[RMDB]
RNA sequence: GGGAACGACUCGAGUAGAGUCGAAAAAAAAAGAUAUGGAGGAUUGAAACGCUGAUGACCUAACGUAACAUCGCUCGGAAACGAGCGUGGUUAGCAAGGCGGAGUACGAUCCUCCUAAGUCAAAAAAUCAAGGGUAAAAGUUCGCUUUUACCCUUGAAAAAGAAACAACAACAACAAC
Reactivity to DMS in 0.01 (KOAc 150mM, MgCl2 10mM, bicine 150mM(pH8.5), 24C), signal-to-noise 2, nucleotides 027 to 126: a010a040a060a150a080g000a030u000a300u040g000g010a010g000g000a000u000u000g010a260a130a110c000g010c000u010g030a110u000g000a180c300c010u000a000a000c010g000u000a060a060c130a020u040c000g040c030u000c000g010g000a050a070a120c010g000a000g020c000g070u000g000g000u000u000a000g000c050a050a140g000g040c000g000g000a050g000u000a080c300g000a020u000c000c000u020c010c000u010a010a030g010u020c030a030a000a100a080a100a100
The record gives the reactivity of an RNA of 177 nucleotides to DMS. For DMS, 1,101 sequencing reads were counted.